An RNA of 207 nucleotides, treated with 2A3 and read out base by base. It was measured as part of the RMDB library OK3TST.
RNA sequence: GGGAACGACUCGAGUAGAGUCGAAAAGACAUCUCUUCUGCAAACACCAGACAAACUGAGACAAUGAACUUCCGCAGGACCCAAAGCACCUCUUACUGCAGGAAAGAAGAUCCAGUGAGAUAGUUAGUCCACAAAUGGAAUGUCAAUCCAUAAACAACAUUACCCCACGGUUCGCCGUGGGGUAAUGAAAAGAAACAACAACAACAAC
Reactivity to 2A3 in 0.01 (KOAc 150mM, MgCl2 10mM, bicine 150mM(pH8.5), 24C), signal-to-noise 2, nucleotides 027 to 156: g010a000c000a000u030c000u020c000u140u020c030u050g030c070a100a260a120c030a050c010c030a000g030a040c060a030a100a010c020u000g000a090g080a240c020a000a080u130g000a070a050c000u010u010c020c030g000c000a010g020g040a100c090c030c070a020a070a110g060c080a040c030c060u040c020u060u150a050c010u020g020c020a030g130g000a050a030a030g040a030a010g040a100u050c010c010a030g000u000g050a000g010a030u040a030g040u050u020a010g020u000c000c000a030c040a080a100a010u040g000g100a030a060u160g070u130c040a050a050u050c030c000a010u130a150a090a000c070a070a000